[RMDB]
RNA sequence: GGGAACGACUCGAGUAGAGUCGAAAAAGGCACUUCGCAAUGUGUGCUCAAACAUUGCUUAUUCAAACACGUUUCACAAUGUGCGACAAAGAAACAUUGUUAUAAGAGCUAAUGUUUUAACAUUGGCAAAACCGAGUUAGCUUCGGCUAACUCGGAAUCUCUUUGUUUGGUUCGCCAAACAAAGAGAAAAAGAAACAACAACAACAAC
Reactivity to DMS in 0.01 (KOAc 150mM, MgCl2 10mM, bicine 150mM(pH8.5), 24C), signal-to-noise 2, nucleotides 027 to 156: a060g020g000c060a070c080u000u000c140g050c020a090a080u000g050u000g030u000g000c010u000c090a220a090a070c030a050u000u000g030c000u000u000a080u000u000c010a050a250a010c040a060c050g030u000u010u000c160a230c200a070a050u000g040u010g030c030g070a240c190a030a090a060g000a140a060a010c030a010u000u010g030u000u000a080u010a080a130g010a270g020c000u000a010a050u010g010u000u010u000u000a120a100c010a010u000u000g030g020c000a030a030a030a110c010c010g000a030g000u030u010a020g000c020u000u010c300g030g020c000u000a010a010c010u000c000g000g000a000a050
Reactivity to 2A3 in 0.01 (KOAc 150mM, MgCl2 10mM, bicine 150mM(pH8.5), 24C), signal-to-noise 5, nucleotides 027 to 156: a000g150g010c010a000c000u000u000c000g010c000a000a000u000g010u010g010u010g010c110u080c220a030a020a000c000a000u010u000g000c000u110u120a230u150u150c110a040a090a020c080a010c080g010u010u020u020c040a010c000a030a020u010g000u010g030c020g070a080c140a060a150a020g100a010a060a000c000a010u000u020g010u050u100a140u060a280a100g060a020g040c000u010a000a000u010g040u010u150u040u150a090a010c000a000u010u010g000g000c000a010a000a060a100c000c000g000a000g000u000u000a000g000c000u030u020c260g030g000c000u000a000a000c000u000c000g010g000a000a010
Chemical mapping of a 207-nucleotide RNA with DMS and 2A3. The 2A3 profile rests on 4,496 reads. Values cover nucleotides 27 to 156. High 2A3 reactivity points to a flexible backbone, as in loops and unpaired stretches. The data come from the RNA Mapping Database (RMDB), library M2RFPK.